An RNA of 177 nucleotides, treated with DMS and 2A3 and read out base by base. For DMS, 1,824 sequencing reads were counted. High 2A3 reactivity points to a flexible backbone, as in loops and unpaired stretches. Values cover nucleotides 27 to 126. For 2A3 the reverse transcriptase was SuperScript II with manganese. Source: RMDB library TTRDEL, as collected in RNAgym.
RNA sequence: GGGAACGACUCGAGUAGAGUCGAAAAGAUAUGGAAGAUGGACAUGUCCAAAAAGGGUCGGAAACGACCUACAAAGGACAACAGCCCGCUCUUCCUAAGUCAAAAGCCAUUAGUUCGCUAAUGGCAACACUCAUAGACACUUCGGUGUCUAUGAGUGAAAAGAAACAACAACAACAAC
Reactivity to DMS in 0.01 (KOAc 150mM, MgCl2 10mM, bicine 150mM(pH8.5), 24C), signal-to-noise 3, nucleotides 027 to 126: g030a060u000a300u000g020g000a010a000g020a040u010g020g020a010c030a230u000g000u000c000c000a040a030a120a170a160g000g000g000u000c000g000g010a100a110a170c000g000a020c000c010u000a050c090a120a120a220g000g020a000c000a020a080c210a150g000c010c030c010g010c220u000c000u000u000c000c000u010a040a080g000u010c030a090a060a080a050g000c010c000a010u000u000a000g000u010u020c290g000c000u020a000a010u000g000g010c010a040a080
Reactivity to 2A3 in 0.01 (KOAc 150mM, MgCl2 10mM, bicine 150mM(pH8.5), 24C), signal-to-noise 2, nucleotides 027 to 126: g000a020u040a000u090g010g010a000a000g000a030u190g010g010a020c090a160u200g000u020c000c010a040a010a000a100a180g060g000g000u010c010g010g010a000a030a050c000g010a000c030c000u020a010c010a010a070a010g000g010a010c030a070a020c020a060g010c000c000c010g050c080u000c010u030u000c000c020u030a100a020g040u020c050a000a010a150a090g010c010c000a010u010u020a010g020u020u090c300g000c200u020a000a010u000g000g000c000a010a000